[RMDB]
RNA sequence: GGGAACGACUCGAGUAGAGUCGAAAAGAGUACGUGAGUUCUCUCGUGUACUCGAGAACGAGUGAGAGAGAGUUCGAUCGUUCGUACGUACUCUCGAGAGAUCGAGAACUCACUCACUCGAUCUCUCGUGAUCACGUUCGUACUCACGAGAACUCACACACGGUCUUAGAUUCGUCUAAGACCGUGUAAAAGAAACAACAACAACAAC
Reactivity to DMS in 0.01 (KOAc 150mM, MgCl2 10mM, bicine 150mM(pH8.5), 24C), signal-to-noise 2, nucleotides 027 to 156: g030a090g000u010a030c050g020u000g010a050g030u000u010c090u000c010u010c030g000u010g000u000a050c020u000c010g000a070g000a080a130c010g000a060g020u000g030a070g000a130g020a080g010a120g020u030u010c010g030a070u000c020g000u000u010c040g010u000a090c030g000u000a080c060u000c030u000c000g000a060g010a020g000a040u000c020g000a040g000a040a140c050u000c070a160c080u020c070a260c010u000c000g000a020u000c020u000c010u000c010g010u000g000a150u010c090a050c070g040u000u000c030g030u000a050c070u000c010a060c030g000a120g000a050a090c020u000c010a170c190
Reactivity to 2A3 in 0.01 (KOAc 150mM, MgCl2 10mM, bicine 150mM(pH8.5), 24C), signal-to-noise 5, nucleotides 027 to 156: g040a000g030u090a070c040g000u000g010a010g010u140u040c120u010c010u010c060g010u020g020u070a060c020u020c020g010a020g010a060a040c050g010a010g020u060g020a020g010a020g000a010g000a010g040u020u030c040g030a110u010c010g070u090u020c010g000u020a030c020g010u040a040c020u030c030u010c070g020a010g000a000g000a010u000c010g020a010g020a130a070c030u040c090a040c040u020c010a020c000u000c020g020a070u000c010u000c000u000c020g000u010g010a090u140c050a020c110g020u030u040c020g010u070a040c030u020c040a000c000g000a010g010a030a010c000u000c010a010c010